Record summary: The record gives the reactivity of an RNA of 177 nucleotides to DMS and 2A3. Conditions: 150 mM KOAc, 10 mM MgCl2 and 150 mM bicine (pH 8.5), 24 C.
RNA sequence: GGGAACGACUCGAGUAGAGUCGAAAAGUUGGUCGUUUACGGUUCAUUUCGUCAUUGGGGUCAUCCUUUUAUUAAUUAUUUUGAAGGCCUGGAGAAAUUGCAUAAGCAAGUGACAAUGGAAAAAGAAUACAUGACAAAGAUUCGUCUUUGUCAUGUAAAAAGAAACAACAACAACAAC
Reactivity to DMS in 0.01 (KOAc 150mM, MgCl2 10mM, bicine 150mM(pH8.5), 24C), signal-to-noise 4, nucleotides 027 to 126: g010u000u000g020g010u010c050g010u000u010u000a070c100g000g000u010u010c070a060u000u000u000c080g000u000c040a080u000u000g010g020g000g010u000c040a060u010c020c020u010u010u000u000a090u010u010a120a130u010u010a100u000u000u010u000g010a090a100g010g000c080c010u010g020g010a150g000a060a080a090u000u000g010c050a080u000a050a120g010c030a020a060g020u010g000a050c050a030a060u010g000g010a030a060a080a070a110g010a130a140
Reactivity to 2A3 in 0.01 (KOAc 150mM, MgCl2 10mM, bicine 150mM(pH8.5), 24C), signal-to-noise 1, nucleotides 027 to 126: g040u040u040g010g030u070c030g070u050u080u020a070c060g000g000u020u060c010a020u050u010u130c010g020u010c000a020u000u070g050g010g010g000u010c000a000u050c010c000u010u100u060u040a060u030u040a140a050u080u070a050u020u120u090u080g030a040a020g050g020c000c020u040g070g020a030g070a050a130a050u050u040g000c040a000u050a270a140g030c020a020a020g020u000g110a050c010a060a060u080g000g070a160a050a020a060a060g080a050a040